The data come from the RNA Mapping Database (RMDB), libraries RFM100 and RFMREP. Structure probing data (DMS and 2A3) for a 177-nucleotide construct.
RNA sequence: GGGAACGACUCGAGUAGAGUCGAAAACAGACAAUUCAGUCCCAGUACUCGGCAAGCGUGAUGGGGCUUGCUUUCAGCGCUCUUCAGAUCUCUGAAAAGAGUCGGUGCAUUCAUUAAAGCUACGUAAUAUAGUGAUGCAAUUCGUUGCAUCACUAUAAAAAGAAACAACAACAACAAC
Reactivity to DMS in 0.01 (KOAc 150mM, MgCl2 10mM, bicine 150mM(pH8.5), 24C), signal-to-noise 7, nucleotides 027 to 126: c130a110g020a090c150a080a090u010u010c090a050g000u000c010c010c000a100g020u020a050c070u000c070g010g000c070a070a040g010c070g030u010g000a090u010g010g000g000g000c020u000u000g010c020u000u010u010c100a050g020c050g020c030u000c060u020u010c110a080g000a110u010c130u000c000u000g000a070a090a080a070g000a020g010u010c030g000g020u000g000c060a110u020u000c070a070u010u030a060a080a100g010c050u000a050c120g000u000a050a120
Reactivity to 2A3 in 0.01 (KOAc 150mM, MgCl2 10mM, bicine 150mM(pH8.5), 24C), signal-to-noise 9, nucleotides 027 to 126: c040a010g210a060c060a060a050u150u130c030a080g030u010c000c000c000a010g030u060a050c040u020c050g070g000c100a080a070g040c040g070u070g070a100u060g020g000g030g000c000u000u050g000c000u030u050u060c050a040g020c010g000c030u000c000u070u010c010a020g020a270u060c090u010c000u120g050a070a080a040a020g020a010g020u030c030g000g020u040g000c040a080u040u150c010a040u060u190a140a040a020g020c030u070a050c040g100u090a140a020

DMS adducts were read by reverse transcription with MarathonRT.